[RMDB]
RNA sequence: GGGAACGACUCGAGUAGAGUCGAAAACCAACAAGCAAGUAUCAACUACGCUUUCGCUUAGAACAUACUAAAGCUACACGAAUUGAAUCGCCAUAGUUUGGUUCGUGUCACAGUUUAUGGCUCGGGGUUAACUGGUUCAACUUAAUCCUUAAAUUAUAUCUGCUGUAGAGUUCGCUCUACAGCAGAUAAAAGAAACAACAACAACAAC
Reactivity to 2A3 in 0.01 (KOAc 150mM, MgCl2 10mM, bicine 150mM(pH8.5), 24C), signal-to-noise 2, nucleotides 027 to 156: c020c000a020a030c070a030a030g000c020a050a010g020u030a050u070c040a060a120c020u020a020c050g010c010u130u120u220c130g000c000u030u020a030g020a130a050c020a060u050a000c060u130a170a080a020g000c010u020a010c000a000c020g020a000a000u000u000g010a010a000u030c070g010c010c000a000u000a010g010u000u010u010g010g050u000u010c010g030u080g080u140c030a030c030a180g100u150u080u010a010u000g000g000c000u000c020g000g000g020g000u000u030a030a010c020u100g070g170u170u100c030a010a030c020u000u030a000a000u020c000c010u010u000a000a030a000u300u140a110u030
The record gives the reactivity of an RNA of 207 nucleotides to 2A3. The 2A3 profile rests on 1,066 reads. The reactions ran in a buffer of 150 mM KOAc, 10 mM MgCl2 and 150 mM bicine (pH 8.5), at 24 C. Reactivities are given for positions 27 through 156. 2A3 adducts were read by reverse transcription with SuperScript II with manganese.